[RMDB]
RNA sequence: GGGAACGACUCGAGUAGAGUCGAAAAAUAUGCUCCUGAUGAACAUGAACAAAACAGGGAAUGUUUGGGCACAGUCUUAGAUCAUACCGGUGACCAAUGCCAUGCAUGGGAUGAUUGGACUCACAUACGCUGCUCUUUCAUUCGUGAAAGAGCAGCGAAAAGAAACAACAACAACAAC
Reactivity to 2A3 in 0.01 (KOAc 150mM, MgCl2 10mM, bicine 150mM(pH8.5), 24C), signal-to-noise 2, nucleotides 027 to 126: a000u180a020u150g030c000u040c050c000u000g070a110u130g000a080a060c010a150u040g040a120a000c060a070a120a120a150c090a000g010g050g060a000a070u080g130u060u060u010g030g000g000c000a000c040a190g000u040c000u000u070a120g060a110u020c010a060u030a130c080c000g080g010u000g010a120c020c020a030a090u130g090c010c000a030u160g090c010a040u110g100g080g070a040u040g010a040u000u080g000g000a020c040u010c000a060c000a150u160a060
Reactivity to DMS in 0.01 (KOAc 150mM, MgCl2 10mM, bicine 150mM(pH8.5), 24C), signal-to-noise 1, nucleotides 027 to 126: a170u010a000u060g000c010u190c000c000u030g010a010u050g000a050a100c060a110u000g000a300a170c160a020a000a210a100c150a070g000g040g000a150a080u000g000u000u000u000g000g050g000c150a090c150a000g000u000c070u000u020a090g150a160u040c000a000u000a090c000c080g000g000u000g000a020c080c110a000a060u010g000c020c100a050u000g040c020a150u040g000g000g010a020u000g000a000u000u000g020g000a030c020u000c100a000c040a030u000a120
The data come from the RNA Mapping Database (RMDB), library OK1LIB. Chemical mapping of a 177-nucleotide RNA with 2A3 and DMS. The DMS profile rests on 983 reads.